[RMDB]
RNA sequence: GGGAACGACUCGAGUAGAGUCGAAAACACCCGCCCGAGUGAACGUCACCAACUCGGCUGGAUUCCAAGCUGGUUGCCUGUCCUACGCUCAGCGCAACAACCGCAGACAUGCGACGGCCCCCGCCGGUGCUUUAUUGUUUUUCGAAACAAUAAAGCAAAAAGAAACAACAACAACAAC
Reactivity to 2A3 in 0.01 (KOAc 150mM, MgCl2 10mM, bicine 150mM(pH8.5), 24C), signal-to-noise 9, nucleotides 027 to 126: c060a050c000c000c010g010c030c030c020g030a020g010u050g060a130a040c050g050u030c040a020c060c010a060a050c020u020c030g020g000c020u040g020g020a110u100u040c020c010a040a030g020c030u060g060g020u090u060g010c000c010u040g020u090c010c010u040a040c040g020c030u050c030a030g010c010g010c060a020a070c020a050a040c050c010g020c020a020g040a100c030a070u100g010c020g020a020c020g040g000c000c010c000c010c010g020c010c020g040g020
Reactivity to DMS in 0.01 (KOAc 150mM, MgCl2 10mM, bicine 150mM(pH8.5), 24C), signal-to-noise 9, nucleotides 027 to 126: c180a130c040c000c020g000c190c020c020g000a040g010u000g000a090a100c090g010u010c060a050c070c050a130a060c030u000c020g010g010c040u000g000g010a110u000u000c030c030a100a090g020c050u010g010g010u010u010g010c020c020u000g010u010c030c040u010a100c100g000c050u010c040a060g010c090g010c050a060a070c100a090a080c110c040g000c030a070g010a100c170a060u010g000c030g000a090c060g000g000c020c010c010c010c040g010c050c060g010g020